[RMDB]
RNA sequence: GGGAACGACUCGAGUAGAGUCGAAAAUUGGAGAGUCCUCUGAUAUUGGCACAUGCGGCGGAAGUCGCCAUGAUUAAUAUUAAGCUGCUAUAACUCUUAAUGUGCGGUUUGCUCGUCGGCAUUUAUGAGAUCCAUCAAGAUUCGUCUUGAUGGAUCUAAAAGAAACAACAACAACAAC
Reactivity to 2A3 in 0.01 (KOAc 150mM, MgCl2 10mM, bicine 150mM(pH8.5), 24C), signal-to-noise 6, nucleotides 027 to 126: u080u100g050g020a060g010a020g110u080c030c000u000c000u010g020a020u030a020u080u060g030g000c030a020c000a070u020g010c020g000g000c000g020g110a090a070g010u010c000g000c040c000a010u030g010a020u030u110a070a010u020a010u080u010a080a040g020c010u040g050c050u080a070u080a270a110c010u020c000u100u140a060a030u100g050u080g080c010g010g030u040u070u110g060c060u030c030g040u000c030g010g010c080a080u030u100u100a180u230g040
Reactivity to DMS in 0.01 (KOAc 150mM, MgCl2 10mM, bicine 150mM(pH8.5), 24C), signal-to-noise 3, nucleotides 027 to 126: u000u000g000g000a080g020a120g000u010c040c000u000c040u000g000a060u010a020u020u010g000g000c020a050c070a040u010g000c000g000g000c000g010g080a110a170g030u000c040g010c010c010a030u000g020a300u030u010a030a040u010a040u000u000a030a060g000c130u020g000c100u010a110u040a090a190c050u000c010u010u010a070a020u000g000u010g020c050g000g010u000u010u010g000c030u000c020g000u010c050g000g000c050a040u020u020u000a020u040g000